[RMDB]
This 207-nucleotide RNA was probed chemically with 2A3. 2A3 is a SHAPE reagent: it acylates the 2'-hydroxyl of flexible nucleotides of all four kinds. The data come from the RNA Mapping Database (RMDB), library RNAMAK. Conditions: 150 mM KOAc, 10 mM MgCl2 and 150 mM bicine (pH 8.5), 24 C.
RNA sequence: GGGAACGACUCGAGUAGAGUCGAAAAGGGGUCCAGUUCGACGAAGAUCUCCUACGCAUCGAUCGUACCUGAAGCCUCCACGGGUACGGGAGCGUAAGAGAUCAGAGAACUGGACGGAGGCACCCAAAAGCCGUUGGAAGUUCGCUUCCAACGGCAAGGGAUAUACAGUGUUCGCACUGUAUAUCCCAAAAGAAACAACAACAACAAC
Reactivity to 2A3 in 0.01 (KOAc 150mM, MgCl2 10mM, bicine 150mM(pH8.5), 24C), signal-to-noise 2, nucleotides 027 to 156: g040g040g110g050u000c010c000a000g000u010u010c030g140a270c020g000a290a000g010a000u010c000u000c010c010u010a000c000g060c000a140u300c030g010a000u010c000g000u000a000c000c010u030g020a080a010g000c000c000u000c010c000a010c000g000g000g000u000a000c000g000g010g000a010g000c000g010u010a010a000g000a000g010a000u000c000a000g000a000g000a000a000c000u010g000g000a000c020g000g000a000g000g000c010a020c010c000c000a020a180a040a040g000c000c010g020u000u000g000g010a000a010g020u080u150c210g120c070u010u000c000c000a000a000c000g000g000c000a000a000